[RMDB]
RNA sequence: GGGAACGACUCGAGUAGAGUCGAAAAGAUAUGGAUCAUGGAAGGGAGCGUACCAUCGGAAACGAUGGCAACGCGAAGAACUUCACAUGAUCCUAAGUCAAAGCGAGUUGUGUUCGCACAACUCGCAUCUAUACUGAAGCUUCGGCUUCAGUAUAGAAAAAGAAACAACAACAACAAC
Reactivity to DMS in 0.01 (KOAc 150mM, MgCl2 10mM, bicine 150mM(pH8.5), 24C), signal-to-noise 4, nucleotides 027 to 126: g000a030u000a070u000g000g000a010u000c000a000u000g000g000a030a000g000g020g010a120g040c000g040u000a230c000c000a010u000c000g020g000a030a020a040c000g010a010u000g010g010c040a030a010c010g040c000g020a120a130g000a150a140c000u000u000c000a120c010a000u000g000a020u000c000c000u000a000a070g000u000c010a120a140a150g010c010g000a020g010u000u000g030u010g010u010u010c300g010c010a000c000a000a010c000u000c000g010c000a010
Reactivity to 2A3 in 0.01 (KOAc 150mM, MgCl2 10mM, bicine 150mM(pH8.5), 24C), signal-to-noise 4, nucleotides 027 to 126: g000a000u010a010u080g000g000a010u000c010a010u020g020g030a010a010g040g030g120a300g030c000g010u000a010c010c010a000u010c010g010g000a000a030a000c000g000a000u010g040g000c040a100a010c010g000c020g020a090a050g050a070a010c010u030u020c060a070c000a300u000g000a000u000c000c000u000a010a010g010u010c030a080a120a020g000c000g000a000g000u000u010g010u010g040u050u180c300g080c100a000c000a000a000c010u000c000g000c010a000